[RMDB]
RNA sequence: GGGAACGACUCGAGUAGAGUCGAAAAAGAUUCCUCCACUUUUAGUCCCUCAUUUUACAUGCCAUGUAUGUAGAUUCGGCUGAUGUGGUGGAAUGAGGGACCAAAAGUGGAAGAAUCUGAAAUUACAUUCCCUAUACCUGUUCGCAGGUAUAGGGAAAAAAGAAACAACAACAACAAC
Reactivity to 2A3 in 0.01 (KOAc 150mM, MgCl2 10mM, bicine 150mM(pH8.5), 24C), signal-to-noise 5, nucleotides 027 to 126: a000g000a010u000u000c000c000u000c000c000a010c010u000u000u000u030a010g000u000c000c000c010u000c000a000u000u020u020u060a070c040a020u120g020c020c040a030u110g060u110a080u100g120u120a120g100a300u170u120c060g040g010c030u070g070a110u130g060u070g090g030u040g030g000a000a000u000g000a000g000g010g000a000c000c010a000a010a000a000g000u000g000g000a000a000g000a000a000u000c000u000g000a060a070a000u170u080a040c040a080
Reactivity to DMS in 0.01 (KOAc 150mM, MgCl2 10mM, bicine 150mM(pH8.5), 24C), signal-to-noise 3, nucleotides 027 to 126: a010g000a000u000u010c000c010u000c000c000a000c000u010u010u010u000a060g010u000c000c000c000u000c000a010u010u010u010u010a090c070a130u020g000c010c020a040u010g000u010a070u030g030u030a120g000a160u010u000c160g010g000c020u010g000a060u000g010u000g010g020u000g010g000a010a000u000g000a020g010g010g000a000c000c020a000a010a000a010g000u000g010g010a000a010g010a020a010u000c010u000g000a060a060a110u030u030a080c180a190